[RMDB]
RNA sequence: GGGAACGACUCGAGUAGAGUCGAAAAGAUAUGGAGCGCUUGACAUGCUCCAUGGUCGGAAACGACCAUGAGAGCAACAGCAAGACGCUCCUAAGUCAAAAGAAAGAGUUGUUCGCAACUCUUUCAACAGAGUAAGAAAGUUCGCUUUCUUACUCUGAAAAGAAACAACAACAACAAC
Reactivity to 2A3 in 0.01 (KOAc 150mM, MgCl2 10mM, bicine 150mM(pH8.5), 24C), signal-to-noise 6, nucleotides 027 to 126: g000a000u020a000u060g000g000a000g000c010g030c010u010u000g030a100c090a300u300g000c000u010c000c000a010u000g000g000u010c000g000g030a030a000a020c010g000a000c010c010a000u080g260a300g000a000g150c140a190a140c040a090g010c000a000a000g040a040c000g000c010u000c000c000u000a000a000g000u000c000a040a040a040a120g000a000a010a000g010a000g000u020u020g030u120u170c220g040c050a000a010c010u000c020u000u000u000c000a000a000
Reactivity to DMS in 0.01 (KOAc 150mM, MgCl2 10mM, bicine 150mM(pH8.5), 24C), signal-to-noise 7, nucleotides 027 to 126: g000a020u000a080u010g000g000a010g010c000g010c010u000u000g000a040c030a300u010g020c000u000c000c000a000u000g000g020u000c000g020g000a020a020a060c000g010a010c000c000a000u000g000a180g000a020g010c000a100a060c160a070g000c000a010a000g000a150c000g010c000u000c000c000u000a000a070g000u000c010a110a100a170a160g000a020a010a010g010a020g010u000u000g010u000u010c250g010c010a020a020c000u000c000u000u000u000c000a120a210